Notes
Structure probing data (DMS and 2A3) for a 207-nucleotide construct. The 2A3 profile rests on 2,258 reads. For 2A3 the reverse transcriptase was SuperScript II with manganese. It was measured as part of the RMDB library OK3TST.
RNA sequence: GGGAACGACUCGAGUAGAGUCGAAAAGAAUGUGGCAAUUCACGCUGGAUGUGGAAGGUGGAAGGAAAGACAAGUGUUAGCAAAUGCAGACCUGUCUGCUGUGGAACUUGAAGACCUUGCUAGUAGUCAGGCUGCUUCCUGGCAUUCCAGGCCUGAGAGCAGUUUAUAGAUUCGUCUAUAAACUGCUAAAAGAAACAACAACAACAAC
Reactivity to DMS in 0.01 (KOAc 150mM, MgCl2 10mM, bicine 150mM(pH8.5), 24C), signal-to-noise 2, nucleotides 027 to 156: g000a100a070u010g040u000g030g020c060a080a110u000u000c040a060c060g040c040u000g040g000a060u050g050u000g000g010a050a070g010g040u000g010g020a130a130g000g010a070a100a060g010a110c050a040a060g020u000g000u000u000a070g020c060a040a070a120u000g000c000a120g010a080c030c070u000g000u010c000u000g030c010u000g030u010g020g010a080a070c020u010u000g000a120a150g020a070c040c020u010u010g000c000u000a090g030u000a070g000u000c040a030g010g020c050u000g000c040u000u000c010c020u010g010g010c000a150u010u000c020c030a070g010g030c090c000u000g020a160g030
Reactivity to 2A3 in 0.01 (KOAc 150mM, MgCl2 10mM, bicine 150mM(pH8.5), 24C), signal-to-noise 4, nucleotides 027 to 156: g060a000a080u100g000u050g070g040c080a050a050u140u060c050a020c110g050c030u020g030g030a090u050g040u110g050g050a030a020g040g030u060g040g040a040a070g000g060a100a030a000g050a010c030a060a060g040u020g090u180u130a040g060c030a050a090a080u110g000c020a000g050a300c020c010u000g010u010c000u000g000c010u000g020u060g080g000a070a070c060u050u140g040a090a030g040a020c030c000u050u120g050c020u060a030g020u030a010g020u020c010a000g020g000c010u000g000c020u030u000c010c000u030g010g000c020a030u120u050c010c000a020g040g000c010c030u130g020a110g020